[RMDB]
RNA sequence: GGGAACGACUCGAGUAGAGUCGAAAAUUGCCGGCUUCAAAGGCUUUAUCGUUGAUUACGUGUGCUAUAACAACGCCAUAGGUAUCAUUCUUCGUCUUCUUAGGCGCGGAACAUCUAAAUAUGGCUACCAAAUAAUAAGGUUCGCCUUAUUAUUUGGAAAAGAAACAACAACAACAAC
Reactivity to 2A3 in 0.01 (KOAc 150mM, MgCl2 10mM, bicine 150mM(pH8.5), 24C), signal-to-noise 3, nucleotides 027 to 126: u120u060g040c010c000g000g060c080u190u110c120a100a020a010g030g040c000u080u150u060a100u060c020g010u010u110g090a150u160u180a090c050g010u110g030u050g110c060u080a030u060a300a020c080a060a030c080g010c000c010a010u010a030g050g030u050a030u160c030a010u050u020c000u010u010c000g020u000c000u240u050c030u150u300a000g010g000c010g000c010g010g000a010a000c020a040u030c030u090a080a090a080u040a040u020g020g020c010u000a020
Reactivity to DMS in 0.01 (KOAc 150mM, MgCl2 10mM, bicine 150mM(pH8.5), 24C), signal-to-noise 8, nucleotides 027 to 126: u010u000g010c030c040g010g010c090u000u000c170a070a120a160g010g000c030u000u000u010a050u010c050g010u000u000g010a130u010u000a060c060g010u000g010u000g010c060u010a080u010a090a090c130a070a100c190g010c000c010a030u000a020g000g000u000a050u010c160a170u000u000c000u000u000c010g010u000c000u000u000c250u000u000a040g010g010c000g020c060g000g000a010a010c180a070u000c100u010a050a060a110u000a020u000g000g010c010u000a220
This 177-nucleotide RNA was probed chemically with 2A3 and DMS. For DMS the reverse transcriptase was MarathonRT. Reactivities are given for positions 27 through 126. For DMS, 10,671 sequencing reads were counted. The RNA was probed in 150 mM KOAc, 10 mM MgCl2 and 150 mM bicine (pH 8.5) at 24 C.